RNA sequence: GGGAACGACUCGAGUAGAGUCGAAAAGAGUCUCACAGUGAGGUCAAGCACACUCCCUGGUGGCGUUUAUGCACUAAAUGGCACCAUAAACGCCGUGACCUUCCAAGGAAGCCUGAGUGAACUGACAUGACUCCUCGUUAUUCGUAACGAGGAGUCAAAAAGAAACAACAACAACAAC
Reactivity to 2A3 in 0.01 (KOAc 150mM, MgCl2 10mM, bicine 150mM(pH8.5), 24C), signal-to-noise 2, nucleotides 027 to 126: g030a050g050u020c020u000c060a050c010a020g080u050g120a020g020g110u040c070a100a000g110c090a020c000a030c050u000c000c060c000u020g040g000u020g030g000c010g000u030u000u000a020u020g140c120a050c130u130a050a170a100u240g060g000c110a000c030c000a000u050a020a010a000c020g000c000c000g000u000g000a000c000c000u050u000c020c000a020a000g120g020a050a000g000c010c030u000g040a040g020u060g060a080a150c050u000g010a060c030a140
Reactivity to DMS in 0.01 (KOAc 150mM, MgCl2 10mM, bicine 150mM(pH8.5), 24C), signal-to-noise 2, nucleotides 027 to 126: g000a100g010u000c000u010c070a290c060a080g000u000g020a230g020g000u000c060a030a130g000c080a110c100a160c020u010c000c000c050u010g010g020u020g020g010c020g000u000u000u000a000u000g000c200a290c230u020a040a130a060u000g000g000c070a160c300c000a080u010a010a020a030c040g030c000c000g020u000g000a090c110c070u000u010c000c020a040a040g030g000a030a130g000c070c000u000g000a040g010u000g000a120a070c010u000g020a050c250a180
This 177-nucleotide RNA was probed chemically with 2A3 and DMS. The reactions ran in a buffer of 150 mM KOAc, 10 mM MgCl2 and 150 mM bicine (pH 8.5), at 24 C.